RNA sequence: GGGAACGACUCGAGUAGAGUCGAAAAAAAAAGAUCUAACAUGCUAGGAGAUUCAGUAAAGGUAGAGGUGGUAGCAGAAUGUGUUUUAUGUUUUAGUUUAAUGAAAAAGAAACUAUGUUAGCUUGUGGACAUAAAAUUGGAGUGCAGUAGCAACAAAGACUGGCUAAAUAUUCGUAUUUAGCCAGUCAAAAGAAACAACAACAACAAC
Reactivity to 2A3 in 0.01 (KOAc 150mM, MgCl2 10mM, bicine 150mM(pH8.5), 24C), signal-to-noise 2, nucleotides 027 to 156: a010a010a010a000a000g050a040u040c020u040a020a020c040a040u040g010c070u030a000g010g000a060g020a090u050u040c060a030g070u110a070a090a000g010g010u010a000g020a020g030g020u060g060g000u020a040g010c020a020g060a100a060u030g020u010g010u030u020u030u100a090u050g050u000u100u020u050a030g000u000u000u100a100a080u030g060a110a030a020a010a020g040a020a060a010c020u020a010u140g070u110u040a000g020c020u020u070g030u040g030g020a000c000a010u090a020a030a030a030u040u040g020g010a020g020u030g050c030a010g010u030a000g060c020a000a020c000a030a070a160
Reactivity to DMS in 0.01 (KOAc 150mM, MgCl2 10mM, bicine 150mM(pH8.5), 24C), signal-to-noise 1, nucleotides 027 to 156: a080a070a110a030a080g020a080u000c030u030a060a100c030a070u000g010c060u010a050g030g010a120g030a130u000u010c050a140g020u000a080a060a080g000g030u010a060g010a110g030g040u000g020g040u010a110g010c020a120g020a080a030u020g030u010g000u000u000u000u010a040u030g000u000u000u000u000a150g030u000u000u000a040a070u010g010a050a080a080a010a130g010a080a030a030c000u000a020u000g000u000u000a040g010c040u000u000g040u010g000g000a010c030a050u000a010a020a040a060u010u000g030g030a080g000u010g000c020a010g030u000a090g000c060a060a040c080a010a140a160
Conditions: 150 mM KOAc, 10 mM MgCl2 and 150 mM bicine (pH 8.5), 24 C. The record gives the reactivity of an RNA of 207 nucleotides to 2A3 and DMS. 2A3 adducts were read by reverse transcription with SuperScript II with manganese. DMS adducts were read by reverse transcription with MarathonRT.